[RMDB]
RNA sequence: GGGAACGACUCGAGUAGAGUCGAAAAACUGCGGCACUAGCUACGGCUAGUGGCGCAGAGGGAAACUCCCAGGCCCCGCUGUAGAGGGACCGUCAGCGGCCGGGCCAGAAAGAAUGAGGUCCCCAAAAGAAGUGGAUACUCUUCGGAGUAUCCACAAGUAUCGAUUACAGUUCGCUGUAAUCGAUACAAAAGAAACAACAACAACAAC
Reactivity to 2A3 in 0.01 (KOAc 150mM, MgCl2 10mM, bicine 150mM(pH8.5), 24C), signal-to-noise 2, nucleotides 027 to 156: a000c000u030g000c030g190g000c010a000c000u000a000g000c010u030a030c190g120g000c000u000a000g000u000g060g030c010g030c000a000g010a000g000g020g050a110a080a030c050u030c000c000c020a010g000g000c010c010c000c000g000c000u000g000u060a080g050a150g120g000g000a000c000c000g000u010c010a000g000c010g070g010c150c130g060g070g000c020c020a030g160a040a100a010g090a020a170u140g050a080g020g010u010c000c000c000c000a030a170a050a080g110a130a090g010u000g000g000a000u000a000c000u020c010u060u120c250g050g010a000g010u000a000u000c000c000a000c000a000a000